The record gives the reactivity of an RNA of 207 nucleotides to 2A3. Conditions: 150 mM KOAc, 10 mM MgCl2 and 150 mM bicine (pH 8.5), 24 C. The data come from the RNA Mapping Database (RMDB), library OK3TST.
[RMDB]
RNA sequence: GGGAACGACUCGAGUAGAGUCGAAAACGAAUCCGUUAUGCGCUUGAAAGAAUUCGGCCCUGGCGGCUAUGAGGAAUGGUAUCAAGAGGCGUUAAGGAAAUGGGAAGAUACCGCCGAAGCGUCAAUCCAGAAACUAGCGAGCGAUAUCGUCGGUGACGGAUCAGAAAGGGUUCGCCCUUUCUGAUCCAAAAGAAACAACAACAACAAC
Reactivity to 2A3 in 0.01 (KOAc 150mM, MgCl2 10mM, bicine 150mM(pH8.5), 24C), signal-to-noise 1, nucleotides 027 to 156: c050g000a040a090u070c060c060g000u000u020a060u140g100c010g040c020u010u040g060a060a090a110g020a080a090u170u050c000g000g000c000c000c040u010g120g060c030g030g040c080u100a050u270g080a010g000g080a070a070u130g000g020u070a020u090c040a080a000g020a050g270g020c060g070u130u110a080a030g100g000a020a120a110u140g030g000g000a060a030g030a140u060a010c000c000g000c000c000g000a020a000g050c040g020u010c000a040a100u000c000c030a160g040a070a070a050c010u020a000g040c040g000a000g000c030g010a020u050a020u140c070g020u020c010g050g000u020g060a050c100